RNA sequence: GGGAACGACUCGAGUAGAGUCGAAAACAGACCCCGGGUCCCCUUCCGAACGAGGGGGACGGUCCUUGGACCUCAGGGGGCCCAUGGAGCCGUGGGAAUCCCCAGACCUCCCUUCUCCACACUCCUUCAGCGAAGGCCUUCGGGCCUUCGAAAAGAAACAACAACAACAAC
Reactivity to 2A3 in 0.01 (KOAc 150mM, MgCl2 10mM, bicine 150mM(pH8.5), 24C), signal-to-noise 4, nucleotides 027 to 129: c040a000g130a070c000c000c000c000g030g030g050u020c000c000c000c000u010u000c030c060g100a090a090c110g000a040g000g000g000g000g040a000c010g010g010u020c000c000u070u190g080g020a060c020c030u020c050a080g060g000g000g040g000c000c000c000a000u040g020g040a110g060c060c030g050u150g010g030g000a050a070u150c040c020c000c010a030g020a110c000c010u010c000c000c000u020u020c030u020c000c000a020c000a030c010u060c000c000u030u110c010a040g040
Reactivity to DMS in 0.01 (KOAc 150mM, MgCl2 10mM, bicine 150mM(pH8.5), 24C), signal-to-noise 3, nucleotides 027 to 129: c080a000g050a180c090c030c010c080g070g020g020u030c000c010c000c040u030u000c020c030g030a170a300c200g040a040g050g020g020g020g010a000c080g000g040u060c040c100u010u000g030g000a110c010c050u050c130a070g020g000g030g010g140c060c000c020a120u020g040g000a100g030c010c040g010u060g020g010g000a080a190u040c000c000c000c000a040g030a140c030c040u030c000c000c050u040u050c010u000c000c100a070c090a170c030u050c010c050u010u010c110a090g060